[RMDB]
RNA sequence: GGGAACGACUCGAGUAGAGUCGAAAACAUCAUCCCUUCGGGGAUGAUGAAAGAUCGAAAGAUCAGGCUUACCGUAAUAAGCCAAUAUACGAGCGAAACGCAAAAGACCUGUGUUCGCACAGGUCAACGGUUUAACUAAGUUCGCUUAGUUAAACCGAAAAGAAACAACAACAACAAC
Reactivity to 2A3 in 0.01 (KOAc 150mM, MgCl2 10mM, bicine 150mM(pH8.5), 24C), signal-to-noise 7, nucleotides 027 to 126: c000a000u000c000a010u010c000c000c000u010u050c190g050g000g010g000a000u010g000a000u000g000a010a010a000g010a010u010c020g020a060a030a030g010a010u010c020a010g010g000c000u010u020a040c070c110g150u080a060a110u040a100a020g000c000c010a030a010u260a020u030a060c120g020a050g060c040g090a240a150a050c110g000c080a030a080a030a030g000a000c000c000u000g000u000g030u050u070c180g020c060a000c000a000g000g000u000c000a010a000
Reactivity to DMS in 0.01 (KOAc 150mM, MgCl2 10mM, bicine 150mM(pH8.5), 24C), signal-to-noise 6, nucleotides 027 to 126: c000a020u010c010a000u000c000c000c010u000u010c210g040g010g010g010a000u000g000a000u000g010a070a080a090g000a010u000c010g010a140a100a120g000a000u000c010a140g010g000c010u000u000a060c120c130g020u000a080a240u000a010a020g010c000c020a130a100u010a090u010a060c150g010a120g020c060g010a060a050a080c110g010c110a050a040a120a120g000a020c010c000u000g030u000g010u000u010c210g030c000a010c010a000g000g000u000c010a010a030
An RNA of 177 nucleotides, treated with 2A3 and DMS and read out base by base. The reactions ran in a buffer of 150 mM KOAc, 10 mM MgCl2 and 150 mM bicine (pH 8.5), at 24 C. It was measured as part of the RMDB library M2PK50. DMS adducts were read by reverse transcription with MarathonRT. For 2A3, 16,963 sequencing reads were counted.